[RMDB]
RNA sequence: GGGAACGACUCGAGUAGAGUCGAAAAUAAUUAACUUACAUCAGUAAGAAAGUAAAAAGAGCAACAAUUCGCCACAAGAAGGUCUCUGUAGGGUCAAUAGUAGCAGGGCUCUUGUCAGGGAAAGACAGCCUCAUUACCAGUUCGCUGGUAAUGAGGCAAAAGAAACAACAACAACAAC
Reactivity to 2A3 in 0.01 (KOAc 150mM, MgCl2 10mM, bicine 150mM(pH8.5), 24C), signal-to-noise 2, nucleotides 027 to 126: u140a010a060u140u020a080a010c010u020u000a000c030a120u110c200a040g000u070a100a070g040a140a080a070g160u200a050a180a020a000a120g040a000g120c000a010a220c040a000a120u130u020c030g000c030c000a100c060a050a030g010a040a090g050g070u060c060u030c000u030g040u020a130g000g000g090u150c110a090a180u080a170g240u010a000g000c090a100g000g000g020c000u000c000u050u000g080u130c040a100g100g000g050a000a080a000g060a040c000a000
Reactivity to DMS in 0.01 (KOAc 150mM, MgCl2 10mM, bicine 150mM(pH8.5), 24C), signal-to-noise 1, nucleotides 027 to 126: u040a020a110u020u090a000a030c000u010u020a020c000a020u120c200a220g000u000a000a000g040a040a020a070g000u140a010a110a170a110a160g040a170g020c050a000a090c110a110a170u100u000c160g000c090c040a060c110a000a100g000a050a040g010g000u000c000u000c000u000g000u000a010g000g060g080u000c200a070a050u070a150g000u000a120g020c000a150g000g000g000c020u000c000u000u000g000u000c090a070g010g000g000a110a050a060g000a080c300a130
Chemical mapping of a 177-nucleotide RNA with 2A3 and DMS. It was measured as part of the RMDB library OK1LIB. The 2A3 profile rests on 711 reads. 2A3 adducts were read by reverse transcription with SuperScript II with manganese. For DMS the reverse transcriptase was MarathonRT. Values are in units of 0.01, from 0 to 300, in steps of 10.